An RNA of 177 nucleotides, treated with 2A3 and DMS and read out base by base. The reactions ran in a buffer of 150 mM KOAc, 10 mM MgCl2 and 150 mM bicine (pH 8.5), at 24 C. The DMS profile rests on 3,851 reads.

RNA sequence: GGGAACGACUCGAGUAGAGUCGAAAAUCGCCGGGUGCCAAUUUCAGCCCGUCGGCUGGCAGGCUGCGCAACCCGGAUGCCACCAGCUGCCGUGCCGCGGCCAGGCUGGUAUCGGCUACCGGUUGCCGGACGUGAUAAUGUUCGCAUUAUCACGUCCAAAAGAAACAACAACAACAAC
Reactivity to 2A3 in 0.01 (KOAc 150mM, MgCl2 10mM, bicine 150mM(pH8.5), 24C), signal-to-noise 3, nucleotides 027 to 126: u080c030g040c040c000g040g000g010u070g040c020c020a070a050u030u120u130c010a020g020c000c010c020g090u130c060g030g010c010u040g010g000c010a030g010g040c020u050g020c040g000c040a040a060c060c080c010g060g020a030u040g010c010c010a020c000c000a020g010c010u050g000c000c000g110u080g120c030c100g010c020g030g020c020c040a060g040g000c000u000g000g000u010a060u060c030g020g010c000u020a080c000c000g010g050u040u090g040c030c040
Reactivity to DMS in 0.01 (KOAc 150mM, MgCl2 10mM, bicine 150mM(pH8.5), 24C), signal-to-noise 4, nucleotides 027 to 126: u010c090g010c020c010g000g000g040u000g000c030c040a060a070u000u000u000c040a040g000c010c000c070g010u010c040g020g000c060u010g000g020c080a030g000g020c010u000g020c160g000c030a040a060c090c030c060g010g010a120u000g000c030c010a080c220c020a030g010c010u000g010c000c000g010u010g010c120c140g010c060g010g010c160c160a100g010g000c010u000g010g010u000a010u010c070g000g000c010u000a300c020c000g000g010u000u000g030c080c090
For DMS the reverse transcriptase was MarathonRT.